[RMDB]
RNA sequence: GGGAACGACUCGAGUAGAGUCGAAAAGAAUCAUCACCAUAGUGACGACUAUGCAGGUCCAGAUUAUUUAGAUGAUUAAAUUACAUGAAGAGGUAACCCAGAUUUACCCUUACUGGUCUCAGUCAGCCGUUUCCUUGUAAUGUCUGGACACUUGGCACGAUUAUAAUGACUUCGGUCAUUAUAAUCGAAAAGAAACAACAACAACAAC
Reactivity to 2A3 in 0.01 (KOAc 150mM, MgCl2 10mM, bicine 150mM(pH8.5), 24C), signal-to-noise 8, nucleotides 027 to 156: g080a000a020u010c000a000u010c000a010c050c010a020u020a010g020u050g150a100c150g040a050c070u020a010u070g050c100a050g110g040u000c010c000a000g000a030u050u090a080u170u300u190a130g000a020u030g010a010u020u100a070a100a060u110u080a020c040a030u110g070a050a040g070a040g060g030u050a030a030c020c040c020a020g010a020u070u090u110a100c010c020c010u030u060a080c010u020g030g050u030c040u010c090a060g110u050c030a020g010c010c020g030u030u070u030c020c000u030u030g070u080a050a050u090g000u000c000u000g010g000a000c020a060c090u050u090g050g030c120a010
Reactivity to DMS in 0.01 (KOAc 150mM, MgCl2 10mM, bicine 150mM(pH8.5), 24C), signal-to-noise 5, nucleotides 027 to 156: g010a080a040u000c010a040u010c020a220c090c060a080u010a050g010u000g020a180c130g010a210c000u000a020u000g020c070a130g040g000u000c010c000a050g020a060u010u000a090u000u000u000a120g010a100u010g010a100u000u000a050a060a050u010u000a050c040a090u010g010a100a090g000a100g000g010u000a050a060c080c050c110a210g010a140u000u000u000a050c040c020c030u000u000a060c090u010g010g020u000c040u010c030a110g000u000c030a040g040c010c010g010u000u000u000c000c020u000u000g020u000a050a090u000g000u000c010u000g000g000a060c030a120c090u000u010g010g020c080a170